[RMDB]
RNA sequence: GGGAACGACUCGAGUAGAGUCGAAAAGAUAUGGAAAGGUGGAGCUAAGAACUACAGCUUCGGAAACGAAUGCUGCUUAGCGCUGACUUUCCUAAGUCAAAGAACUCUAGCUUCGGCUAGAGUUCAACUCCAUAAUUUAGUUCGCUAAAUUAUGGAGAAAAGAAACAACAACAACAAC
Reactivity to 2A3 in 0.01 (KOAc 150mM, MgCl2 10mM, bicine 150mM(pH8.5), 24C), signal-to-noise 4, nucleotides 027 to 126: g000a010u070a010u110g000g010a000a020a000g030g050u090g020g040a030g000c010u010a000a000g000a070a060c110u190a040c300a000g000c000u010u010c020g000g030a070a040a010c010g020a030a020u300g000c010u000g000c010u010u010a010g000c000g010c030u020g010a020c010u010u010u020c000c000u010a150a030g040u040c050a180a030a150g010a000a020c010u000c000u000a000g020c000u070u110c300g130g000c000u010a000g000a010g000u000u000c000a000a000
Reactivity to DMS in 0.01 (KOAc 150mM, MgCl2 10mM, bicine 150mM(pH8.5), 24C), signal-to-noise 5, nucleotides 027 to 126: g000a050u000a300u000g000g000a000a000a010g000g010u000g010g010a040g010c000u000a000a010g000a090a040c090u020a300c010a000g010c010u010u010c000g000g000a090a100a190c010g000a020a020u010g030c000u000g000c000u000u000a000g000c020g000c010u000g000a050c000u000u010u010c000c000u010a050a100g000u000c040a080a100a140g000a000a010c010u000c000u000a010g010c000u000u010c250g010g010c000u000a000g010a020g000u000u000c000a050a160

Record summary: This 177-nucleotide RNA was probed chemically with 2A3 and DMS. It was measured as part of the RMDB library TTRDEL. The 2A3 profile rests on 9,947 reads. The RNA was probed in 150 mM KOAc, 10 mM MgCl2 and 150 mM bicine (pH 8.5) at 24 C. For DMS, 6,672 sequencing reads were counted.